[RMDB]
RNA sequence: GGGAACGACUCGAGUAGAGUCGAAAAAGCUGCUCAGUAUACGUACUGAGCAGCAAGGGGUUGAAGCGGACACCCCUUCAGGCGCGCGCCCAAGCUCCGUACGCCGCCUCAUACGUGAGGCGGGGAAAUAGGUGUAUCUGGUUCGCCAGAUACACAACUCCGAUCAUAUGUUCGCAUAUGAUCGGAGAAAAGAAACAACAACAACAAC
Reactivity to 2A3 in 0.01 (KOAc 150mM, MgCl2 10mM, bicine 150mM(pH8.5), 24C), signal-to-noise 2, nucleotides 027 to 156: a010g000c000u010g000c010u020c000a000g010u020a090u000a080c170g010u010a020c020u000g000a000g000c000a000g000c010a000a000g010g020g000g000u000u140g210a180a000g020c020g000g000a000c000a010c000c000c000c000u030u150c050a020g000g020c010g010c050g060c050g050c100c010c010a010a000g030c110u010c010c020g010u020a040c080g110c020c000g010c010c000u000c000a080u060a090c300g090u020g020a000g000g000c040g000g000g010g010a040a130a030u220a080g040g060u010g000u020a000u000c000u010g000g030u040u030c060g010c060c000a000g000a000u000a000c000a010c000a000a070